This 177-nucleotide RNA was probed chemically with 2A3 and DMS. The reactions ran in a buffer of 150 mM KOAc, 10 mM MgCl2 and 150 mM bicine (pH 8.5), at 24 C. For DMS, 4,147 sequencing reads were counted. It was measured as part of the RMDB library TTRDEL. For DMS the reverse transcriptase was MarathonRT.
[RMDB]
RNA sequence: GGGAACGACUCGAGUAGAGUCGAAAAGAUAUGGACCCAGAACUACUGUUUGUACUGCGAGGAUCUCGGAAACGAGGGAGCAGGUAGAACAGCUGGGUCCUAAGUCAAAGUUGCGUUCGCGCAACAAGUUAAUGAGUACCUUCGGGUACUCAUUAACAAAAGAAACAACAACAACAAC
Reactivity to 2A3 in 0.01 (KOAc 150mM, MgCl2 10mM, bicine 150mM(pH8.5), 24C), signal-to-noise 5, nucleotides 027 to 126: g030a020u080a040u170g000g000a000c010c010c020a000g010a090a070c280u300a020c010u160g110u110u030u070g300u300a040c020u000g010c000g110a280g040g030a040u000c010u000c000g040g030a100a100a080c020g000a010g030g000g000a010g000c010a010g020g030u070a030g010a020a000c000a000g000c000u000g000g000g010u000c000c000u000a020a000g000u000c020a060a050a060g000u000u010g000c010g020u030u080c300g010c000g010c100a000a010c010a020a000
Reactivity to DMS in 0.01 (KOAc 150mM, MgCl2 10mM, bicine 150mM(pH8.5), 24C), signal-to-noise 4, nucleotides 027 to 126: g000a020u010a300u010g010g000a010c000c000c000a010g000a100a030c050u010a300c020u000g010u010u000u000g000u010a300c000u000g010c000g010a080g010g000a040u010c000u010c000g010g000a100a090a210c000g000a030g000g000g000a030g020c010a010g000g010u010a280g000a010a000c040a000g000c000u000g000g010g020u000c000c010u000a000a080g010u000c050a120a100a110g000u000u000g000c000g020u000u010c230g030c010g000c010a010a000c000a050a100